[RMDB]
RNA sequence: GGGAACGACUCGAGUAGAGUCGAAAAAUAACACAGGUUGCGCAACUGUUCGGUCAACUUGUCGCCAGUUUAAUGCCGAUUAUCAUGCAAAUUGUUACUGCGGUUAUGCAAAUUGGUGCCGCGUUAAUCCUAUAGUGCUAUUCGUAGCACUAUAGGAAAAAGAAACAACAACAACAAC
Reactivity to 2A3 in 0.01 (KOAc 150mM, MgCl2 10mM, bicine 150mM(pH8.5), 24C), signal-to-noise 5, nucleotides 027 to 126: a010u120a060a010c020a010c010a030g050g000u020u050g020c040g030c060a070a140c090u080g110u190u090c060g040g010u040c020a020a010c010u010u030g010u020c000g000c010c000a010g000u000u030u050a070a030u080g010c010c010g020a010u050u050a060u130c040a010u060g060c030a010a100a160u180u060g030u060u020a040c050u110g130c020g010g040u090u220a040u090g120c100a040a050a060u040u040g010g000u020g050c020c000g050c020g050u070u090a040a060
Reactivity to DMS in 0.01 (KOAc 150mM, MgCl2 10mM, bicine 150mM(pH8.5), 24C), signal-to-noise 9, nucleotides 027 to 126: a060u010a070a100c070a040c040a030g010g000u000u000g020c140g010c080a070a100c130u000g010u000u000c090g000g010u000c040a020a030c030u000u000g000u000c020g010c020c010a020g010u000u000u000a110a080u000g000c010c010g010a080u000u010a040u000c040a030u000g000c250a060a140a140u010u000g000u000u000a030c140u000g010c000g010g000u000u000a040u000g010c180a020a020a060u000u010g000g020u000g000c030c020g010c150g010u000u010a070a110
The data come from the RNA Mapping Database (RMDB), library OK2TST. The record gives the reactivity of an RNA of 177 nucleotides to 2A3 and DMS. Values are in units of 0.01, from 0 to 300, in steps of 10. For 2A3 the reverse transcriptase was SuperScript II with manganese. The 2A3 profile rests on 5,832 reads. Conditions: 150 mM KOAc, 10 mM MgCl2 and 150 mM bicine (pH 8.5), 24 C.